Structure probing data (2A3) for a 207-nucleotide construct. Values cover nucleotides 27 to 156. The reactions ran in a buffer of 150 mM KOAc, 10 mM MgCl2 and 150 mM bicine (pH 8.5), at 24 C.

RNA sequence: GGGAACGACUCGAGUAGAGUCGAAAACGAACUUGAAGGAGGAUUUAAUGAUGAAAAUUAGAAAUCAAUUCAAAAAUGGUCAAUAUACACGGGAGAAAAAAAAGGGAAGAAAUGGCAUAGAACCGAGGGAGCGGCACCCCUUUCUUGCUCGUUGAUCGUUACCCGUACGAUUCGUCGUACGGGUAACAAAAGAAACAACAACAACAAC
Reactivity to 2A3 in 0.01 (KOAc 150mM, MgCl2 10mM, bicine 150mM(pH8.5), 24C), signal-to-noise 1, nucleotides 027 to 156: c000g000a020a030c050u110u090g030a090a020g050g040a050g000g010a010u070u140u170a170a040u150g030a000u030g030a050a090a170a120u190u160a130g020a120a040a010u060c020a050a080u260u040c050a040a060a040a040a090u080g030g040u030c010a060a110u100a030u020a140c030a010c050g000g060g010a040g040a010a260a000a000a000a000a000a010g010g000g000a050a000g020a010a060a020u060g050g000c000a060u060a180g020a030a010c000c010g010a050g010g010g000a040g090c030g010g000c020a040c000c000c010c020u000u110u000c030u030u050g010c000u000c070g030u000u050g050a070u100c120